[RMDB]
RNA sequence: GGGAACGACUCGAGUAGAGUCGAAAAUAUCUGAUUUAUGAGGGCUAGAAUGAGUGUAGGCAGAAGAAAAAAAAUGUAUUGUGGGAAUCUCACUUGGUUUCAGUCUACAUCAAGGGAUACCCACUCACAUACAGCCAGGGUUCGCCCUGGCUGUAUGAAAAGAAACAACAACAACAAC
Reactivity to DMS in 0.01 (KOAc 150mM, MgCl2 10mM, bicine 150mM(pH8.5), 24C), signal-to-noise 1, nucleotides 027 to 126: u000a160u000c020u010g010a140u000u000u000a050u030g000a100g010g010g010c030u010a040g000a090a080u040g000a090g010u010g000u000a120g050g010c020a070g010a040a120g030a080a010a000a030a100a040a080a040u000g010u030a060u020u010g000u010g000g000g000a150a030u000c060u000c110a070c140u000u000g010g010u000u000u050c110a190g030u010c110u010a040c100a000u000c040a000a010g010g000g010a020u000a050c000c010c020a010c050u000c120a060